[RMDB]
RNA sequence: GGGAACGACUCGAGUAGAGUCGAAAACUCAUUCACGGUUACGUCUGUCUCUGGCAGAGCAGACUGUCAGGAGGACGAGGUCACCAUCUUCACGAAGCCAAAGCCAAAUUCCGCCUUGUCCUGUAAAACGUAGCACCCAUUUCGAUGGGUGCUACGUAAAAGAAACAACAACAACAAC
Reactivity to 2A3 in 0.01 (KOAc 150mM, MgCl2 10mM, bicine 150mM(pH8.5), 24C), signal-to-noise 3, nucleotides 027 to 126: c000u020c030a050u140u070c030a030c080g110g010u050u150a020c040g060u000c030u030g260u090c010u000c000u050g050g000c010a020g000a060g030c000a030g040a160c000u040g020u000c020a060g060g150a020g000g000a030c060g000a010g000g010u040c020a030c000c000a040u080c070u050u030c040a050c090g060a050a010g070c020c020a130a050a000g040c020c000a040a050a050u080u020c000c010g000c000c000u040u000g020u020c010c000u040g090u050a050a100a000
Reactivity to DMS in 0.01 (KOAc 150mM, MgCl2 10mM, bicine 150mM(pH8.5), 24C), signal-to-noise 2, nucleotides 027 to 126: c070u000c000a080u040u080c030a110c120g000g000u010u000a020c150g010u000c050u000g000u030c050u000c000u010g000g000c140a160g000a200g000c170a040g000a100c030u000g050u000c140a130g000g030a180g000g000a020c010g030a040g070g000u000c050a040c130c030a110u000c100u000u000c110a100c050g000a060a100g000c120c020a040a050a140g000c000c010a080a020a080u000u000c060c010g000c030c040u000u000g040u000c000c000u000g010u020a040a020a030

Structure probing data (2A3 and DMS) for a 177-nucleotide construct. For 2A3, 1,300 sequencing reads were counted. The reactions ran in a buffer of 150 mM KOAc, 10 mM MgCl2 and 150 mM bicine (pH 8.5), at 24 C. The data come from the RNA Mapping Database (RMDB), library OK1LIB.